[RMDB]
RNA sequence: GGGAACGACUCGAGUAGAGUCGAAAAUGGCCAAGGGAUCGGAAACAGCUGUCAUGCUGCUCAUUCACUAAGGAGUUCCAAACACAAGCUCUUUGCCUCCCUUCCCACUUGAGACAGCAGGAACCCAUGUGUAGUUUAGAAGCAGAGAGAGCAGGUCACGUAGUGUUUAAUUCGUUAAACACUACGUAAAAGAAACAACAACAACAAC
Reactivity to 2A3 in 0.01 (KOAc 150mM, MgCl2 10mM, bicine 150mM(pH8.5), 24C), signal-to-noise 7, nucleotides 027 to 156: u110g010g000c000c010a010a010g050g000g010a070u180c140g050g040a110a080a020c040a040g010c000u030g060u080c020a090u210g040c020u010g010c000u020c010a140u190u090c030a020c080u090a130a180g050g000a110g010u020u020c030c010a060a140a010c140a020c020a080a070g000c010u010c000u010u030u040g010c010c000u050c030c000c000u000u010c030c010c000a040c040u070u080g070a080g000a100c010a000g020c010a020g000g020a000a010c010c010c040a070u060g030u020g020u060a090g020u020u100u100a120g010a150a020g040c100a000g010a010g010a000g000a000g050c040a010g020g070u110c040
Reactivity to DMS in 0.01 (KOAc 150mM, MgCl2 10mM, bicine 150mM(pH8.5), 24C), signal-to-noise 4, nucleotides 027 to 156: u010g010g060c050c050a060a070g030g010g010a070u020c070g040g010a150a080a160c060a060g020c030u000g020u000c070a170u010g020c020u000g010c010u000c040a190u010u000c050a070c040u000a080a090g000g030a060g000u010u000c020c030a110a070a160c120a110c090a070a140g000c030u000c000u000u000u000g030c020c020u000c010c010c020u000u000c000c010c010a130c140u000u000g030a130g010a070c030a020g000c030a120g020g020a050a080c020c010c000a050u000g010u010g010u000a080g020u000u020u000a120g010a070a100g020c010a070g010a140g010a110g010a100g030c000a050g010g000u020c130

Conditions: 150 mM KOAc, 10 mM MgCl2 and 150 mM bicine (pH 8.5), 24 C. The record gives the reactivity of an RNA of 207 nucleotides to 2A3 and DMS. Reactivities are given for positions 27 through 156. The data come from the RNA Mapping Database (RMDB), library OK3TST. For 2A3, 6,336 sequencing reads were counted.